Overview:
An RNA of 177 nucleotides, treated with 2A3 and DMS and read out base by base. The reactions ran in a buffer of 150 mM KOAc, 10 mM MgCl2 and 150 mM bicine (pH 8.5), at 24 C. Reactivities are given for positions 27 through 126. For DMS, 4,480 sequencing reads were counted.
RNA sequence: GGGAACGACUCGAGUAGAGUCGAAAAGAUAUGGAUGACAGGGAGCGUGUGUUCGGAAACGAACAUAAACGCGACGAUCUGUAUCCUAAGUCAAACGCCUGGUUCGUGUUCGCACGAACCAGGCGAACGUAUCUUUCAUGUUCGCAUGAAAGAUACGAAAAGAAACAACAACAACAAC
Reactivity to 2A3 in 0.01 (KOAc 150mM, MgCl2 10mM, bicine 150mM(pH8.5), 24C), signal-to-noise 2, nucleotides 027 to 126: g010a010u020a020u070g020g010a020u090g220a040c010a010g000g010g000a020g010c000g010u010g020u000g000u020u010c000g010g020a040a030a030c020g000a010a000c020a020u070a040a300a010c010g030c010g020a080c000g000a020u000c000u000g000u000a010u000c000c000u020a090a020g030u020c040a150a070a140c040g050c010c010u020g000g030u000u000c020g000u040g080u120u120c300g030c110a000c010g000a000a000c000c000a000g030g000c010g000a010a000
Reactivity to DMS in 0.01 (KOAc 150mM, MgCl2 10mM, bicine 150mM(pH8.5), 24C), signal-to-noise 3, nucleotides 027 to 126: g010a020u010a200u000g000g000a010u000g010a040c020a030g000g000g000a040g020c000g040u000g010u000g010u000u010c000g010g010a030a050a090c000g000a020a000c000a010u000a030a110a070c010g020c000g010a070c210g000a040u020c000u000g000u000a100u000c000c000u010a020a140g010u010c030a090a150a260c020g010c000c010u010g000g020u000u000c000g020u000g010u000u010c220g000c000a030c000g010a000a000c000c000a000g000g000c000g000a000a020